[RMDB]
RNA sequence: GGGAACGACUCGAGUAGAGUCGAAAAUCCGUUUGUCGUGCAACUGCAAAAGAGCUUCCCGCAAUUUGAGGUAGUAGCACAGCAGGUCACUCCAAAUGACCAUGCUAAUGCCAGAGCAUUUUCGCAUUUACACAUGAUGCUUCGGCAUCAUGUGUAAAAAAGAAACAACAACAACAAC
Reactivity to 2A3 in 0.01 (KOAc 150mM, MgCl2 10mM, bicine 150mM(pH8.5), 24C), signal-to-noise 2, nucleotides 027 to 126: u000c000c000g030u020u150u190g170u120c060g060u050g130c100a100a060c020u040g030c000a000a050a000a000g070a110g000c000u040u020c000c010c000g000c060a110a280u040u000u250g120a160g000g100u040a000g000u020a000g030c010a000c060a030g050c080a070g000g020u000c000a000c090u100c080c030a000a080a100u060g000a000c000c000a040u010g000c000u050a080a060u110g020c010c040a010g020a040g050c090a060u020u040u040u090c080g000c080a000u020
Reactivity to DMS in 0.01 (KOAc 150mM, MgCl2 10mM, bicine 150mM(pH8.5), 24C), signal-to-noise 2, nucleotides 027 to 126: u020c000c010g000u000u000u000g040u000c080g000u000g000c030a090a040c040u020g000c000a020a030a090a080g000a100g010c080u000u000c020c010c000g050c050a080a070u010u000u000g000a060g030g010u000a010g000u000a050g010c050a040c160a070g000c110a030g020g000u000c000a000c070u020c200c250a090a090a080u030g000a020c020c000a090u000g030c010u000a020a130u010g000c020c050a210g010a090g020c070a080u000u000u000u010c060g010c210a210u020

An RNA of 177 nucleotides, treated with 2A3 and DMS and read out base by base.
Conditions: 150 mM KOAc, 10 mM MgCl2 and 150 mM bicine (pH 8.5), 24 C.
2A3 adducts were read by reverse transcription with SuperScript II with manganese.